[RMDB]
RNA sequence: GGGAACGACUCGAGUAGAGUCGAAAACUAAGCAGUCUUAUGCUAUUGCCACCAUCAAAGAAAUUGUUGGUGAGCGCCAACUAUUACUUGUGUGGGAGGCUGGCAAGUCCAAACCACCACUCAAUCGGUGCAAAUAAUUCUUCGGAAUUAUUUGCACAAAAGAAACAACAACAACAAC
Reactivity to DMS in 0.01 (KOAc 150mM, MgCl2 10mM, bicine 150mM(pH8.5), 24C), signal-to-noise 1, nucleotides 027 to 126: c040u000a040a060g060c020a030g040u000c150u010u000a180u000g000c040u020a190u010u010g000c000c000a100c040c000a020u010c060a050a030a140g000a090a060a050u000u000g030u000u000g010g040u010g010a110g000c110g010c160c130a050a040c130u000a070u010u000a110c070u000u000g000u010g020u000g000g010g000a170g140g000c090u000g000g010c040a080a050g000u020c030c010a000a100a150c060c010a080c040c020a060c070u010c020a090a010u030c190g020
Reactivity to 2A3 in 0.01 (KOAc 150mM, MgCl2 10mM, bicine 150mM(pH8.5), 24C), signal-to-noise 2, nucleotides 027 to 126: c020u070a080a000g020c000a000g070u130c080u120u180a060u100g000c000u050a130u050u210g000c000c010a010c000c000a010u030c020a060a060a130g100a130a300a150u050u010g000u000u000g000g000u050g050a040g010c030g000c000c010a070a050c000u020a020u240u050a050c030u060u020g000u000g010u020g070g090g030a250g020g000c010u000g010g000c060a180a060g040u000c000c010a020a020a050c000c000a010c020c010a020c000u090c000a010a070u090c090g070